[RMDB]
RNA sequence: GGGAACGACUCGAGUAGAGUCGAAAACGAUCCGUACCCCCUUCACCUCCAUCCGGGUUACGGUGAAGCGAUCCUCCCUCCGGGUGACCGCACCAUUGUAGUGGAUCCCAUACCGCGACGAGAGGCGCAAUAACCCGAAAUUCGUUUCGGGUUAUUGAAAAGAAACAACAACAACAAC
Reactivity to DMS in 0.01 (KOAc 150mM, MgCl2 10mM, bicine 150mM(pH8.5), 24C), signal-to-noise 9, nucleotides 027 to 126: c110g010a080u000c010c030g020u000a120c030c010c010c070c050u000u000c070a090c030c020u000c030c030a100u010c110c150g000g000g000u010u010a050c100g010g010u000g000a120a070g010c060g010a070u000c010c030u000c020c010c020u000c060c050g010g000g010u000g010a070c060c030g000c050a090c040c040a090u000u010g010u000a090g020u000g010g010a130u000c030c040c030a110u010a160c070c030g000c050g000a040c060g010a100g010a080g010g000c110g010
Reactivity to 2A3 in 0.01 (KOAc 150mM, MgCl2 10mM, bicine 150mM(pH8.5), 24C), signal-to-noise 2, nucleotides 027 to 126: c010g040a060u070c060c050g050u120a160c000c000c000c000c000u040u060c060a070c030c000u050c020c020a130u060c080c040g060g000g000u040u100a030c020g010g000u040g020a050a010g050c030g050a100u080c010c000u010c000c020c000u010c030c000g030g000g000u050g000a030c010c010g040c010a030c010c010a040u040u180g040u040a090g000u020g050g020a030u020c000c000c010a020u090a130c000c020g020c030g030a000c020g020a040g010a010g140g000c020g030
Structure probing data (DMS and 2A3) for a 177-nucleotide construct.
The reactions ran in a buffer of 150 mM KOAc, 10 mM MgCl2 and 150 mM bicine (pH 8.5), at 24 C.